[RMDB]
RNA sequence: GGGAACGACUCGAGUAGAGUCGAAAACAGGGGUUGAAUGGUCUGUGCCUAAAUCCCUGGAGGGAGGGUGUCAAGUUACAAAACGGGCUGGCAGGAUCCAAUAACUGUUUUUUCAAGCAGGUGGUAACGGAUAGUUCAAGUUCGCUUGAACUAUCCGAAAAGAAACAACAACAACAAC
Reactivity to 2A3 in 0.01 (KOAc 150mM, MgCl2 10mM, bicine 150mM(pH8.5), 24C), signal-to-noise 1, nucleotides 027 to 126: c010a000g020g030g030g000u040u100g070a130a090u150g070g040u080c090u200g300u300g070c000c000u000a010a010a010u000c000c000c000u010g040g020a050g020g040g040a110g000g000g000u060g080u090c050a010a080g050u100u070a150c050a110a130a060a040c020g010g000g030c060u060g030g000c000a080g000g080a020u040c070c060a030a040u070a040a030c000u020g100u020u090u000u010u110u060c060a030a000g000c010a020g020g050u050g000g000u090a080a020
Reactivity to DMS in 0.01 (KOAc 150mM, MgCl2 10mM, bicine 150mM(pH8.5), 24C), signal-to-noise 1, nucleotides 027 to 126: c240a040g020g000g050g050u000u010g000a090a120u020g030g010u010c170u000g030u040g040c030c020u020a100a050a020u000c020c010c000u020g010g020a040g000g000g010a060g010g000g000u010g020u000c150a030a050g000u030u000a090c210a040a030a210a080c100g000g000g000c030u000g010g000c100a130g000g020a080u000c050c010a030a030u000a130a070c010u000g000u000u030u000u010u000u000c130a080a040g010c040a030g010g020u020g000g000u020a160a070